[RMDB]
RNA sequence: GGGAACGACUCGAGUAGAGUCGAAAAGAUAUGGAUGGCGCUUUACGAUACAACUGACGAUAAGCAGCACAUCGGAAACGAUGUGGCUGCUUUUGACGUCAGGUAUCGUAAAGCGCCAUCCUAAGUCCAAGGUUGAUACGUUCGCGUAUCAACCUUGAAAAGAAACAACAACAACAAC
Reactivity to DMS in 0.01 (KOAc 150mM, MgCl2 10mM, bicine 150mM(pH8.5), 24C), signal-to-noise 1, nucleotides 027 to 126: g000a070u010a300u000g000g010a020u010g000g020c010g000c000u000u000u000a000c000g000a040u000a020c010a140a270c000u000g020a010c000g000a170u000a000a020g010c020a000g020c020a020c000a010u000c000g010g000a160a180a230c000g010a010u000g000u010g020g070c000u020g020c000u000u000u020u000g020a140c090g010u010c010a000g010g000u000a000u000c000g000u010a000a000a020g000c010g000c000c010a000u000c000c000u000a000a040g000u000c070
Structure probing data (DMS) for a 177-nucleotide construct.
The DMS profile rests on 1,564 reads.
The reactions ran in a buffer of 150 mM KOAc, 10 mM MgCl2 and 150 mM bicine (pH 8.5), at 24 C.